[RMDB]
RNA sequence: GGGAACGACUCGAGUAGAGUCGAAAAUGCUGCAGACUUUAUUGACUUUUUCUCGAGAGAGGAUUGGCCAAUUAUCUCCAAACAUAUUUCCCUCAUCGUUCCCACCAAGAAGGUGAAUACAACAUCUGCUCAAACGUCUCUUAAUAACGUAGAGCAAAGGGUGGGUAUAGUUCGCUAUACCCACCCUAAAAGAAACAACAACAACAAC
Reactivity to 2A3 in 0.01 (KOAc 150mM, MgCl2 10mM, bicine 150mM(pH8.5), 24C), signal-to-noise 1, nucleotides 027 to 156: u010g000c040u060g140c050a020g010a300c050u060u030u220a300u000u180g030a040c000u060u000u000u150u010c000u000c000g000a000g000a000g030a040g000g040a000u160u000g000g000c000c050a190a190u220u110a160u130c100u000c000c030a060a100a290c160a040u230a100u130u060u110c030c060c020u000c000a040u000c000g000u000u030c190c000c000a000c010c000a110a120g090a030a130g050g010u040g010a030a010u140a200c010a150a000c010a000u140c000u030g000c000u000c010a200a290a200c040g030u000c030u040c070u300u300a130a070u210a130a050c000g000u000a010g040a000g000c050a000a000